The data come from the RNA Mapping Database (RMDB), library OK1LIB. The record gives the reactivity of an RNA of 177 nucleotides to 2A3.
RNA sequence: GGGAACGACUCGAGUAGAGUCGAAAAUCUUGAGCAUUGCAAAGGUUUCGGUGAUGUCACGCCUCUCUCAAACCUUGUUACACUUGAGGAACUGAAUCUCCACUACUGUGACAAAGUAACCUCUGGACGGUAACGUGCCUUUCGAGGCACGUUACCGAAAAGAAACAACAACAACAAC
Reactivity to 2A3 in 0.01 (KOAc 150mM, MgCl2 10mM, bicine 150mM(pH8.5), 24C), signal-to-noise 2, nucleotides 027 to 126: u000c000u030u090g080a020g080c070a110u000u300g000c060a030a000a140g050g010u000u040u040c010g030g010u020g030a040u080g050u180c000a030c110g010c010c000u110c000u000c000u010c010a060a110a060c020c000u060u040g030u030u130a030c100a010c000u060u120g000a030g000g160a040a010c110u190g130a130a060u080c030u010c020c000a180c020u120a040c070u100g010u010g070a010c010a000a150a000g060u050a020a020c000c000u000c000u000g000g040a000

Overview: The RNA was probed in 150 mM KOAc, 10 mM MgCl2 and 150 mM bicine (pH 8.5) at 24 C.